Description
An RNA of 177 nucleotides, treated with DMS and 2A3 and read out base by base. The RNA was probed in 150 mM KOAc, 10 mM MgCl2 and 150 mM bicine (pH 8.5) at 24 C. Source: RMDB libraries RFM100 and RFMREP, as collected in RNAgym. For 2A3 the reverse transcriptase was SuperScript II with manganese.
RNA sequence: GGGAACGACUCGAGUAGAGUCGAAAAAAGGGAUGCCUGCCUCGGAAAGAGGCAGGUCGCAGUGACUCGGACGCUCCAACUGUCUAGUAACAACAUAGGUGACCGCAAAUCCGCAAGGACUCGUACGAUUAAUGAUGUUUUUCGAAACAUCAUUAAUAAAAGAAACAACAACAACAAC
Reactivity to DMS in 0.01 (KOAc 150mM, MgCl2 10mM, bicine 150mM(pH8.5), 24C), signal-to-noise 9, nucleotides 027 to 126: a080a060g000g010g010a100u020g010c000c000u000g000c000c000u000c000g010g030a090a120a160g000a010g010g010c010a000g000g020u000c070g020c060a080g010u010g000a080c030u010c050g010g010a070c060g010c060u010c030c040a070a090c100u000g010u000c040u010a080g010u010a070a070c120a070a070c100a080u010a070g010g010u010g000a090c040c030g010c070a050a090a110u010c020c020g010c140a070a090g000g000a050c070u000c080g010u010a070c160g000
Reactivity to 2A3 in 0.01 (KOAc 150mM, MgCl2 10mM, bicine 150mM(pH8.5), 24C), signal-to-noise 9, nucleotides 027 to 126: a000a000g100g010g020a050u120g010c000c000u000g000c000c000u000c010g090g130a300a140a090g000a040g000g000c000a000g000g000u000c000g000c000a040g020u050g060a030c020u010c000g020g010a010c020g010c030u030c030c010a070a070c050u040g020u040c010u030a060g050u070a090a060c070a040a010c010a050u090a040g060g000u030g060a040c020c020g020c050a040a040a070u030c010c010g020c050a040a030g040g010a030c020u030c070g050u090a050c060g020